[RMDB]
RNA sequence: GGGAACGACUCGAGUAGAGUCGAAAAAGUGAUGACCUCUCAGCCCCUCCACCUUGGGGUGCCCUAUCCGAGCACUGCUGUUUCGGUAGAAAGGCUAAGCACGUCGCAAUGACGUAAGGUGGGACUUCGUGUUAAAAUUGUUCGCAAUUUUAACACGAAAAGAAACAACAACAACAAC
Reactivity to DMS in 0.01 (KOAc 150mM, MgCl2 10mM, bicine 150mM(pH8.5), 24C), signal-to-noise 2, nucleotides 027 to 126: a020g010u000g000a050u000g010a150c190c060u010c080u000c040a090g010c000c000c000c000u000c000c000a020c000c000u000u000g010g000g000g000u010g010c030c020c000u000a100u000c000c000g000a020g010c040a040c220u010g000c180u000g000u000u000u010c000g000g010u000a020g000a060a150a160g010g000c010u010a020a150g040c210a050c000g050u000c010g020c240a090a070u010g000a000c000g040u000a010a000g010g010u000g000g000g000a070c190u000u010
Reactivity to 2A3 in 0.01 (KOAc 150mM, MgCl2 10mM, bicine 150mM(pH8.5), 24C), signal-to-noise 3, nucleotides 027 to 126: a000g100u060g020a060u110g120a120c010c020u050c020u040c040a020g020c020c000c000c000u000c000c000a000c000c000u010u000g000g000g000g000u030g000c000c010c000u020a010u000c000c000g000a010g000c020a080c170u260g080c080u060g130u130u300u050c010g000g020u010a000g020a020a010a000g000g000c000u010a040a020g070c040a010c030g010u000c020g040c210a190a300u300g010a010c000g010u000a000a000g010g000u000g000g010g000a010c020u010u010